[RMDB]
This 177-nucleotide RNA was probed chemically with 2A3. For 2A3 the reverse transcriptase was SuperScript II with manganese.

RNA sequence: GGGAACGACUCGAGUAGAGUCGAAAAGAAAGGGAAAACCCAUGGCAGCUGCUGGACACAGCCCAAGAUUAGUUUAAGACUCUUGUGCGUGAACAUCAGCUAGUGUGGGGUUUCAACACGGCAUAAAGUUGCCUCUCUCAUUCGUGAGAGAGGCAACAAAAGAAACAACAACAACAAC
Reactivity to 2A3 in 0.01 (KOAc 150mM, MgCl2 10mM, bicine 150mM(pH8.5), 24C), signal-to-noise 2, nucleotides 027 to 126: g060a000a070a000g050g000g020a010a000a030a120c000c000c000a000u030g060g000c000a000g000c000u000g000c000u000g000g030a040c000a000c000a050g000c010c010c000a000a020g010a050u140u240a040g200u170u050u110a200a020g120a070c030u000c000u000u010g000u010g000c030g000u000g030a010a000c000a000u040c020a020g000c030u000a030g000u000g000u020g000g000g060g030u000u020u040c060a060a000c050a010c050g050g070c120a150u130a140a130a000